[RMDB]
RNA sequence: GGGAACGACUCGAGUAGAGUCGAAAACGAGGCGCCCCCUGUCAGACUCCUCCGUCGACGACCAUCGAAGUCGGGAAGCCACCAUGAGGCUUCGCAAUGAACGCUAGGCGCGCUUUGCGCAGUGGCCGGUACCACUCGCUUUCGAGCGAGUGGUACCAAAAGAAACAACAACAACAAC
Reactivity to DMS in 0.01 (KOAc 150mM, MgCl2 10mM, bicine 150mM(pH8.5), 24C), signal-to-noise 1, nucleotides 027 to 126: c110g000a070g000g000c030g000c000c030c020c160c040u020g000u020c010a190g010a080c040u010c050c000u000c000c000g000u000c000g000a040c000g020a110c110c030a060u000c080g020a050a050g000u000c030g030g000g000a070a070g010c020c010a170c020c110a160u040g000a160g030g000c000u020u060c020g000c180a080a080u040g000a060a110c170g000c020u040a060g010g000c090g000c220g070c190u070u040u000g000c000g000c030a030g060u000g000g010c120c070
Reactivity to 2A3 in 0.01 (KOAc 150mM, MgCl2 10mM, bicine 150mM(pH8.5), 24C), signal-to-noise 2, nucleotides 027 to 126: c030g020a010g010g000c010g090c000c030c000c010c000u040g100u080c020a050g030a080c020u020c030c000u000c030c060g020u060c030g030a030c000g000a000c020c000a050u140c020g020a050a020g100u060c060g000g030g040a000a000g020c020c000a020c000c000a100u210g090a010g030g000c000u000u030c020g000c010a050a150u170g050a150a020c030g000c020u000a050g070g040c030g000c050g000c080u090u140u160g000c020g000c020a070g010u060g080g070c050c100

Chemical mapping of a 177-nucleotide RNA with DMS and 2A3. The reactions ran in a buffer of 150 mM KOAc, 10 mM MgCl2 and 150 mM bicine (pH 8.5), at 24 C. High DMS reactivity at an A or C suggests that its Watson-Crick edge is free. For DMS the reverse transcriptase was MarathonRT. It was measured as part of the RMDB library OK1LIB.